[RMDB]
RNA sequence: GGGAACGACUCGAGUAGAGUCGAAAAGAUAUGGACGUUCUAAUCCUUGGAUUUAUAUAGCGAAUGUUCCUGUAUCGGAAACGAUACAGGAACAAACUAUAUUGUCAGGAUUUCUACGUCCUAAGUCCAUUAAGAUAGGGUUCGCCCUAUCUUAAUGAAAAGAAACAACAACAACAAC
Reactivity to DMS in 0.01 (KOAc 150mM, MgCl2 10mM, bicine 150mM(pH8.5), 24C), signal-to-noise 5, nucleotides 027 to 126: g010a100u010a300u010g000g010a010c010g010u000u000c030u000a020a010u000c000c000u010u010g040g010a030u000u010u000a010u000a010u000a000g010c050g010a180a160u000g010u000u000c000c000u000g010u000a000u000c000g010g000a150a120a210c000g010a010u000a000c000a000g000g000a000a000c000a000a040a060c000u000a000u000a000u000u000g000u000c000a040g000g000a010u000u000u000c030u000a010c000g010u000c000c000u000a020a110g000u000c030
Reactivity to 2A3 in 0.01 (KOAc 150mM, MgCl2 10mM, bicine 150mM(pH8.5), 24C), signal-to-noise 5, nucleotides 027 to 126: g060a030u140a110u290g010g000a000c010g000u020u010c040u060a010a010u020c020c030u090u260g170g000a050u200u300u030a030u020a000u000a010g050c110g230a300a200u110g000u000u000c010c000u000g000u000a000u000c000g030g020a060a080a020c010g000a000u000a010c010a000g000g010a000a000c010a000a000a000c000u000a000u000a010u000u020g020u030c010a000g000g010a010u010u020u030c020u020a000c000g000u000c000c000u010a100a020g020u000c020

Structure probing data (DMS and 2A3) for a 177-nucleotide construct. Values are in units of 0.01, from 0 to 300, in steps of 10. Conditions: 150 mM KOAc, 10 mM MgCl2 and 150 mM bicine (pH 8.5), 24 C.